Structure probing data (DMS and 2A3) for a 207-nucleotide construct. 2A3 adducts were read by reverse transcription with SuperScript II with manganese.
[RMDB]
RNA sequence: GGGAACGACUCGAGUAGAGUCGAAAAAGUUUGCCAUGUUUUAAAAGAGCUCCGUAGUCCCACAGGCGAAAAACUCUUUGAGUCUUUUUCAGAUGAUCCUAUCACAGCCGUACAUUUUGAAGUGAUGAAUUGCAAAGGUGUUCAAGAUACAUUGACACGGUAUAAUCGAGUUCGCUCGAUUAUACCGAAAAGAAACAACAACAACAAC
Reactivity to DMS in 0.01 (KOAc 150mM, MgCl2 10mM, bicine 150mM(pH8.5), 24C), signal-to-noise 1, nucleotides 027 to 156: a110g020u020u000u000g000c030c110a140u000g000u000u000u000u000a090a090a130a110g000a040g000c060u000c050c040g040u010a210g030u010c010c010c070a180c080a080g000g000c040g010a050a040a060a050a060c020u010c030u000u030u000g010a080g000u000c040u000u030u010u000u000c020a160g010a120u030g000a110u000c060c030u010a140u000c050a050c080a120g030c020c000g040u000a060c020a090u000u000u000u010g050a100a070g030u010g010a150u000g010a050a090u010u010g020c030a030a080a080g000g010u000g010u010u000c000a030a120g020a150u010a040c040a110u000u000g010a060c100a090
Reactivity to 2A3 in 0.01 (KOAc 150mM, MgCl2 10mM, bicine 150mM(pH8.5), 24C), signal-to-noise 1, nucleotides 027 to 156: a000g060u070u080u150g020c000c000a080u020g070u010u200u000u010a090a130a020a010g030a010g000c010u050c090c060g040u100a030g070u020c030c020c010a080c070a060g020g000c010g040a030a010a020a030a040c000u000c020u060u070u070g000a000g030u160c020u130u020u080u100u200c090a080g010a090u020g020a020u070c010c010u070a050u140c040a110c040a080g030c030c010g080u150a010c050a050u040u050u080u150g080a010a020g060u030g090a170u010g030a140a070u160u050g060c080a040a020a130g090g020u050g030u020u030c000a040a040g010a060u130a190c040a130u100u280g020a000c000a000

The RNA was probed in 150 mM KOAc, 10 mM MgCl2 and 150 mM bicine (pH 8.5) at 24 C. The DMS profile rests on 1,883 reads. Source: RMDB library OK3TST, as collected in RNAgym. For 2A3, 416 sequencing reads were counted. Values are in units of 0.01, from 0 to 300, in steps of 10.